[RMDB]
RNA sequence: GGGAACGACUCGAGUAGAGUCGAAAAGAUAUGGAAGUUCGAUGAUGGUCGUUGAAACUCGGUCGGAAACGACCGAGUGGAGACUAAGUCGAGACUUCCUAAGUCAAAAGAUCACUUCGGUGAUCAAGUAUGGACAUACGUUCGCGUAUGUCCAUACAAAAGAAACAACAACAACAAC
Reactivity to DMS in 0.01 (KOAc 150mM, MgCl2 10mM, bicine 150mM(pH8.5), 24C), signal-to-noise 2, nucleotides 027 to 126: g010a030u010a300u000g000g010a010a000g010u000u020c010g030a030u000g010a200u000g040g000u000c000g020u000u010g030a260a180a020c000u000c000g010g010u000c040g000g000a150a080a210c000g020a020c000c010g010a020g010u010g000g000a110g000a000c000u020a090a300g000u000c000g000a030g030a020c000u000u000c000c000u000a000a070g000u000c070a120a100a150a210g010a010u000c000a010c020u020u020c190g030g000u010g000a000u000c000a060a070
Reactivity to 2A3 in 0.01 (KOAc 150mM, MgCl2 10mM, bicine 150mM(pH8.5), 24C), signal-to-noise 2, nucleotides 027 to 126: g010a040u160a030u100g000g010a000a000g000u040u020c020g000a000u080g060a100u300g070g000u000c020g130u300u030g000a000a010a010c000u000c020g050g010u020c000g080g000a000a100a000c010g000a030c000c000g020a010g000u000g000g010a000g020a000c000u020a050a030g020u000c030g010a040g110a030c010u000u020c010c020u010a070a010g020u030c010a000a020a100a160g020a010u000c010a010c030u060u120c300g150g000u030g010a010u000c010a000a020